[RMDB]
The record gives the reactivity of an RNA of 207 nucleotides to 2A3 and DMS. The 2A3 profile rests on 1,619 reads. DMS adducts were read by reverse transcription with MarathonRT.
RNA sequence: GGGAACGACUCGAGUAGAGUCGAAAACAAGCUAUCACAAACUAUCGUAGGAACAGAAAACCAAACACCACAUGUUCUCACUUAUAAAUGGGAGUUGAACAAGAACACAUGGACACAGGGAAGGGAACUCACACACCCGGGCCUGUUGGGGGGUGGGUAUACUCUCUAACUUCGGUUAGAGAGUAUAAAAAGAAACAACAACAACAAC
Reactivity to 2A3 in 0.01 (KOAc 150mM, MgCl2 10mM, bicine 150mM(pH8.5), 24C), signal-to-noise 3, nucleotides 027 to 156: c030a030a000g030c020u120a070u290c060a060c090a160a150a060c040u050a070u150c060g050u080a060g060g020a030a030c020a030g090a070a140a030a070c070c050a080a090a020c050a050c010c030a050c020a080u060g010u000u020c020u020c020a060c030u120u130a100u120a270a160a110u110g040g050g000a050g040u070u070g050a080a050c040a090a050g060a120a000c040a000c020a080u080g040g020a010c010a000c030a070g030g020g010a040a030g040g000g000a020a020c030u070c100a020c000a010c000a020c060c010c030g000g090g020c000c060u050g010u050u040g010g000g000g000g020g030u100g000g030g000
Reactivity to DMS in 0.01 (KOAc 150mM, MgCl2 10mM, bicine 150mM(pH8.5), 24C), signal-to-noise 3, nucleotides 027 to 156: c030a070a120g020c020u000a120u010c060a130c040a090a100a100c030u000a050u000c060g050u010a060g020g000a090a150c050a130g000a070a040a110a100c040c030a070a060a080c040a080c010c040a060c030a120u000g010u010u000c020u010c020a040c070u000u000a120u000a050a060a080u000g020g010g020a090g010u010u000g000a070a060c060a050a050g020a040a060c050a060c040a080u000g010g020a080c040a040c030a080g010g010g020a130a060g030g000g010a070a090c040u000c030a040c050a100c060a150c020c000c040g000g010g000c040c030u000g010u000u010g000g030g010g020g030g010u020g010g010g020

Conditions: 150 mM KOAc, 10 mM MgCl2 and 150 mM bicine (pH 8.5), 24 C. 2A3 adducts were read by reverse transcription with SuperScript II with manganese.